[RMDB]
RNA sequence: GGGAACGACUCGAGUAGAGUCGAAAAGAGCAACUUAGGAUUUUAGGCUCCCCGGUGCGUCUCGAACCGCGCCGGGCCAAACCCACAGGGGCUGGCGGUCCUGUGCGGUCAAAGUCUUUCCGCUGGAAUACCUAUCCCAGUUUCGACUGGGAUAGAAUAGUGAAAAUGUAUUCGUACAUUUUCACUAAAAAGAAACAACAACAACAAC
Reactivity to DMS in 0.01 (KOAc 150mM, MgCl2 10mM, bicine 150mM(pH8.5), 24C), signal-to-noise 2, nucleotides 027 to 156: g000a080g030c030a030a110c040u000u010a050g020g000a070u000u000u000u000a140g010g010c030u000c030c000c020c020g030g050u000g000c020g010u000c110u000c220g000a190a160c170c020g010c000g040c020c000g020g000g000c020c010a040a050a090c010c000c000a050c010a060g010g000g000g000c010u000g020g010c010g000g000u020c000c000u000g020u010g010c100g010g030u000c070a050a040a030g010u000c020u000u000u000c030c010g000c020u010g000g010a120a190u010a070c100c020u010a010u000c010c010c000a020g010u000u000u000c300g020a080c000u000g000g000g000a000u000a000g010a070a100
Reactivity to 2A3 in 0.01 (KOAc 150mM, MgCl2 10mM, bicine 150mM(pH8.5), 24C), signal-to-noise 3, nucleotides 027 to 156: g010a010g000c020a040a150c080u120u110a140g050g100a160u200u160u060u110a080g040g020c000u010c000c000c000c000g010g020u020g000c010g020u020c070u070c190g090a090a030c030c010g010c010g000c000c000g000g000g000c000c010a030a020a010c000c000c000a000c000a000g000g020g000g020c000u010g020g000c010g010g020u010c000c000u010g000u000g020c180g000g000u070c060a060a030a070g020u030c040u090u170u030c010c000g010c010u020g000g040a090a060u120a170c000c000u000a010u000c020c000c000a010g000u010u030u090c150g040a020c010u000g000g000g010a000u000a000g000a000a000